Chemical mapping of a 207-nucleotide RNA with 2A3 and DMS. For 2A3, 2,158 sequencing reads were counted.
[RMDB]
RNA sequence: GGGAACGACUCGAGUAGAGUCGAAAAACCGAACUAGGCGCCGUCGGCGGACUCAUCUUCACGCUGCCGUUCACCGACGUCGCCGAGCUCGUCGACCAGGUGCGGGACGGCUGCCUCGACGGAUUCGAGGACGCCCUCGACCACUUGCCGCCCCGCGGACUACGCCUAAGUUCGCUUAGGCGUAGUCAAAAGAAACAACAACAACAAC
Reactivity to 2A3 in 0.01 (KOAc 150mM, MgCl2 10mM, bicine 150mM(pH8.5), 24C), signal-to-noise 3, nucleotides 027 to 156: a000c020c000g000a000a010c010u010a060g010g000c010g000c030c000g010u000c000g000g000c000g010g030a030c000u030c050a100u060c070u300u280c140a070c170g100c070u060g050c060c040g000u010u010c010a020c010c000g000a000c000g000u010c000g000c000c000g000a000g010c010u000c000g060u020c080g060a080c040c000a070g080g060u160g070c010g000g010g000a010c020g010g040c020u080g050c020c080u200c080g070a110c110g050g030a120u200u030c010g010a020g030g090a270c090g180c040c010c010u010c010g010a020c010c020a030c030u060u100g000c000c000g010c000c000c000c000g000c010g010
Reactivity to DMS in 0.01 (KOAc 150mM, MgCl2 10mM, bicine 150mM(pH8.5), 24C), signal-to-noise 1, nucleotides 027 to 156: a070c080c020g020a060a090c020u000a000g000g000c030g040c060c040g000u000c020g030g030c000g010g000a010c000u000c060a090u010c170u000u000c060a090c130g030c130u000g020c100c190g110u000u000c070a040c030c010g020a030c030g040u000c000g000c000c000g000a020g000c060u000c000g010u020c010g000a120c010c090a180g000g030u020g030c020g020g030g020a110c030g000g030c020u000g000c060c030u000c070g110a110c070g030g000a210u000u000c030g020a080g030g000a100c190g000c070c010c040u000c030g020a170c050c040a060c060u000u030g020c020c020g020c000c010c000c020g040c030g000